[RMDB]
RNA sequence: GGGAACGACUCGAGUAGAGUCGAAAAUUGCGCUGCACAUCGAAAGGGUAACAAAUGUCCUGAGGCCUGGAGAUGUACCCGCUACGGAGAAUAAGAUGUUCAUGGUAGGAAGAAUAAUGAAGUCGAAGAUUUGUACCUUCUUCGGAAGGUACAAAUCAAAAGAAACAACAACAACAAC
Reactivity to DMS in 0.01 (KOAc 150mM, MgCl2 10mM, bicine 150mM(pH8.5), 24C), signal-to-noise 2, nucleotides 027 to 126: u010u000g010c050g030c030u010g030c120a060c040a030u000c010g000a210a180a070g010g010g000u020a080a120c120a050a070a120u000g000u000c010c050u000g010a120g010g010c010c020u020g010g000a260g000a030u000g020u000a050c030c290c000g020c050u000a070c060g000g010a070g010a080a150u010a060a090g010a040u020g000u000u020c090a040u000g000g040u000a040g000g000a060a100g010a090a010u010a130a050u000g000a040a080g000u000c090g010a150a070
Reactivity to 2A3 in 0.01 (KOAc 150mM, MgCl2 10mM, bicine 150mM(pH8.5), 24C), signal-to-noise 1, nucleotides 027 to 126: u030u070g000c090g000c040u070g010c030a010c030a060u050c020g030a080a030a050g100g000g020u170a160a050c040a130a160a080u230g060u110c030c000u040g060a100g040g030c050c010u000g040g000a040g010a050u060g030u050a060c020c000c000g020c000u080a050c080g020g060a080g000a090a000u070a160a050g120a130u150g080u070u040c060a070u060g040g050u050a080g090g070a120a040g070a130a000u180a100a040u110g160a060a020g050u010c020g020a050a010